[RMDB]
About this RNA: Structure probing data (2A3 and DMS) for a 177-nucleotide construct. The 2A3 profile rests on 6,251 reads. For 2A3 the reverse transcriptase was SuperScript II with manganese.

RNA sequence: GGGAACGACUCGAGUAGAGUCGAAAACCGUAUCGGUUCGCCGAUACGGAAAAGUUAAUGCUGCUAACACACAUCUUAACCAUGGCGGUGGUAUCGCUGGUGGGACUCCCCAGUUCGCUGGGGAGAACUGAUACCGUACUUUCGAGUACGGUAUCAGAAAAGAAACAACAACAACAAC
Reactivity to 2A3 in 0.01 (KOAc 150mM, MgCl2 10mM, bicine 150mM(pH8.5), 24C), signal-to-noise 3, nucleotides 027 to 126: c010c000g000u000a000u010c010g000g050u050u030c160g020c070c010g010a000u000a000c000g000g000a040a100a000a010g050u070u100a090a050u180g060c070u050g020c020u100a120a010c030a000c020a000c010a160u060c050u130u140a090a070c020c010a050u060g040g000c010g000g050u100g040g150u150a050u160c020g020c010u060g080g040u030g010g000g040a040c010u000c000c000c000c000a000g000u030u060c170g030c060u000g010g010g000g000a000g000a010a010
Reactivity to DMS in 0.01 (KOAc 150mM, MgCl2 10mM, bicine 150mM(pH8.5), 24C), signal-to-noise 4, nucleotides 027 to 126: c000c010g000u000a000u000c000g000g020u000u010c230g030c010c000g010a010u000a000c000g000g000a020a020a040a100g010u010u010a070a080u000g000c050u000g000c060u000a050a050c070a100c120a080c120a070u010c040u010u010a080a140c020c040a050u000g010g010c030g000g030u000g000g020u000a070u000c040g020c020u000g030g050u000g000g000g020a260c000u000c000c020c000c000a000g010u000u010c200g020c000u010g010g000g000g000a000g010a020a070
The DMS profile rests on 4,782 reads. Conditions: 150 mM KOAc, 10 mM MgCl2 and 150 mM bicine (pH 8.5), 24 C. DMS (dimethyl sulfate) methylates the pairing face of unpaired adenines and cytosines.